[RMDB]
RNA sequence: GGGAACGACUCGAGUAGAGUCGAAAAGAAUGGCAGUUUGUCACAUCAGCAUAGAGAUCUCUUUUGUUAUACCUCGGCUAUGAGUAUACAUUUUUAUAGCUUAUGCUGAUGUUUUUGACUUUACUGAGGGUGUAUCGUACUUCGGUACGAUACACCCAAAAGAAACAACAACAACAAC
Reactivity to 2A3 in 0.01 (KOAc 150mM, MgCl2 10mM, bicine 150mM(pH8.5), 24C), signal-to-noise 2, nucleotides 027 to 126: g170a070a100u150g040g050c020a080g030u050u240u160g000u000c000a000c000a010u000c000a000g110c000a000u000a000g300a010g000a140u120c000u000c000u030u070u010u000g020u190u000a000u000a000c120c190u130c060g010g040c110u140a290u300g010a000g000u000a000u000a000c000a070u000u000u000u000u170a260u290a060g000c010u060u000a000u000g000c000u000g000a000u050g000u010u010u010u010u010g000a000c000u000u000u050a020c000u140g030a170
Source: RMDB library OK1LIB, as collected in RNAgym. Structure probing data (2A3) for a 177-nucleotide construct. For 2A3 the reverse transcriptase was SuperScript II with manganese. The 2A3 profile rests on 519 reads. The reactions ran in a buffer of 150 mM KOAc, 10 mM MgCl2 and 150 mM bicine (pH 8.5), at 24 C.